[RMDB]
RNA sequence: GGGAACGACUCGAGUAGAGUCGAAAAGGCACAUUCGUGUGCCAUGGCACCUUUGUGAAGCUCAUCGAUCAAUAUUCCGAGGCGAUCCCAUUGGGAUCGCUCCCCACCGGACAUAUUGGGAGAGCUUCACUCUGGUAAAACUUCGGUUCGCCGAAAAAUCGAGAUGGGUAUUCGUACCCAUCUCGAUAAAAGAAACAACAACAACAAC
Reactivity to 2A3 in 0.01 (KOAc 150mM, MgCl2 10mM, bicine 150mM(pH8.5), 24C), signal-to-noise 2, nucleotides 027 to 156: g000g000c010a000c000a010u070u050c230g110u060g000u000g010c000c000a000u020g040g000c100a000c000c000u030u000u000g020u000g000a000a000g000c000u010c000a300u180c180g140a130u080c020a010a000u000a000u000u010c000c000g010a000g020g000c000g000a030u000c050c000c040a100u110u300g000g000g010a000u000c000g030c020u050c010c000c000c020a040c010c000g000g000a030c030a130u020a000u000u010g020g060g010a030g000a000g000c000u010u010c000a000c000u000c010u010g020g010u030a120a060a040a050c040u070u070c020g040g000u060u080c170g030c080c020g020a030a080a110a080